[RMDB]
Chemical mapping of a 207-nucleotide RNA with DMS. Source: RMDB library OK3TST, as collected in RNAgym. DMS adducts were read by reverse transcription with MarathonRT.

RNA sequence: GGGAACGACUCGAGUAGAGUCGAAAAUGCCCUCCCUUCCUGAAGAAUCUCUGUGAGAUGAGGCCAGGAAUGGUUUCCCUGGGCUCCCCCAGGCCUCGGCACAAGGCCUCCAGCCCUCCCUAGAGAGGCAGAUGAGAGUCUUUCCCCAAUGGAGGUGUAAUAAGAGACUGUUCGCAGUCUCUUAUUAAAAAGAAACAACAACAACAAC
Reactivity to DMS in 0.01 (KOAc 150mM, MgCl2 10mM, bicine 150mM(pH8.5), 24C), signal-to-noise 1, nucleotides 027 to 156: u000g000c040c020c000u000c020c000c020u010u010c030c020u000g000a150a070g000a300a030u000c000u000c010u000g020u030g020a150g030a090u000g010a100g040g030c280c020a020g010g010a070a060u000g020g000u000u000u000c030c020c000u000g020g030g000c020u000c030c010c010c030c180a180g020g000c010c000u000c030g020g040c080a140c080a110a090g000g000c010c000u000c010c020a140g010c060c040c010u040c020c010c080u000a160g010a160g000a070g000g010c070a020g000a120u000g000a090g010a060g010u000c020u000u000u000c010c000c010c040a090a180u010g040g010a030g030g010u010g000